RNA sequence: GGGAACGACUCGAGUAGAGUCGAAAAUCCUCUAUCUUCGGAUAGAGGAAAAGAGCUAGCAGCUACCGCUAGCAAAGAAAAGGUACCAAGACGGAAACGUCAAAACGAAGGGGUUCGCCCCUUCGAAGACAUUCAAUAGCUUCGGCUAUUGAAUGUCAAAAGAAACAACAACAACAAC
Reactivity to DMS in 0.01 (KOAc 150mM, MgCl2 10mM, bicine 150mM(pH8.5), 24C), signal-to-noise 1, nucleotides 027 to 126: u000c000c000u010c000u000a000u000c000u000u000c110g020g000a010u020a020g020a020g000g000a020a000a070a130g000a230g010c010u000a000g010c000a230g010c230u010a020c140c060g000c000u000a000g000c000a070a020a070g000a100a010a110a110g000g020u000a130c090c120a150a120g020a000c010g000g000a140a070a160c020g010u000c010a060a040a160a140c030g020a000a000g010g000g000g030u000u000c130g000c000c000c000c000u000u000c010g000a090a070
Reactivity to 2A3 in 0.01 (KOAc 150mM, MgCl2 10mM, bicine 150mM(pH8.5), 24C), signal-to-noise 1, nucleotides 027 to 126: u010c000c010u000c000u000a000u000c000u030u040c100g100g000a000u000a010g010a050g000g020a020a030a000a020g060a030g000c010u000a000g010c040a030g000c040u080a060c070c020g010c000u000a000g020c020a030a010a000g030a010a050a000a000g060g000u020a040c010c040a060a040g010a000c010g010g030a090a030a030c000g020u020c000a020a010a010a010c000g000a000a000g000g040g000g020u010u060c210g130c010c000c030c000u010u000c000g000a000a000
The record gives the reactivity of an RNA of 177 nucleotides to DMS and 2A3. The reactions ran in a buffer of 150 mM KOAc, 10 mM MgCl2 and 150 mM bicine (pH 8.5), at 24 C. The 2A3 profile rests on 2,437 reads. Source: RMDB library M2PK50, as collected in RNAgym.